[RMDB]
RNA sequence: GGGAACGACUCGAGUAGAGUCGAAAAGUGUAGCGUCACUUUGAUGGCGGUACUAUGAAUUGAUGCAAGGUGGGGAGCGACCUUAAACAGUUCUGGUGGUGCUCUGAAUGGAGUGCUCUACUGAGAUUUAACUUAUGCACGUUCGCGUGCAUAAGAACUCAGCCAAGAGGUUCGCCUCUUGGCUGAGAAAAGAAACAACAACAACAAC
Reactivity to 2A3 in 0.01 (KOAc 150mM, MgCl2 10mM, bicine 150mM(pH8.5), 24C), signal-to-noise 2, nucleotides 027 to 156: g060u050g000u000a050g080c020g010u000c010a010c000u160u200u250g220a300u080g030g010c060g100g030u030a020c020u090a040u140g030a010a010u090u030g040a050u110g070c010a020a020g000g000u010g000g040g000g000a010g010c020g030a010c000c000u090u060a060a170a060c030a040g000u000u020c000u020g000g000u010g000g060u030g000c030u010c010u100g060a060a050u180g050g000a020g000u070g000c010u000c030u010a130c070u080g020a030g100a300u040u160u100a060a030c000u000u000a000u030g000c000a000c010g020u040u040c150g060c000g070u000g000c000a000u000a000a000g000a000a000